[RMDB]
RNA sequence: GGGAACGACUCGAGUAGAGUCGAAAAACCUGAUCUAAACCACCUGGGGUUAUACACCUUGGACCAAGCUAAGAUGCAUUGCGGAGCUUGUGGGUACGGUUGGGCUUAGUCGAAGCACAGUCAUGCAGAAGUUCAUAGACUUCGGUCUAUGAACUUCAAAAGAAACAACAACAACAAC
Reactivity to 2A3 in 0.01 (KOAc 150mM, MgCl2 10mM, bicine 150mM(pH8.5), 24C), signal-to-noise 4, nucleotides 027 to 126: a000c000c000u010g020a060u010c020u130a160a000a040c010c000a000c020c000u040g000g000g000g000u040u110a120u050a160c110a010c040c000u000u010g020g040a010c010c050a030a000g000c020u080a070a040g070a080u120g030c060a120u100u210g040c060g050g020a000g000c000u050u030g040u100g010g000g020u050a060c050g010g000u050u030g060g010g010c030u050u040a030g010u070c040g060a040a010g070c040a030c010a050g070u100c020a050u050g000c000a030
Reactivity to DMS in 0.01 (KOAc 150mM, MgCl2 10mM, bicine 150mM(pH8.5), 24C), signal-to-noise 2, nucleotides 027 to 126: a050c000c000u000g000a080u020c070u010a060a160a140c070c050a120c090c010u000g010g020g030g010u000u010a110u020a130c190a040c020c000u100u010g020g000a300c110c040a030a060g000c050u020a100a120g010a110u010g000c020a120u030u040g040c070g000g020a040g000c040u000u000g000u010g000g000g000u020a040c080g000g000u000u010g010g000g020c040u000u030a070g050u010c040g000a140a040g010c020a080c090a060g010u000c110a040u000g000c080a150
Chemical mapping of a 177-nucleotide RNA with 2A3 and DMS. It was measured as part of the RMDB libraries RFM100 and RFMREP.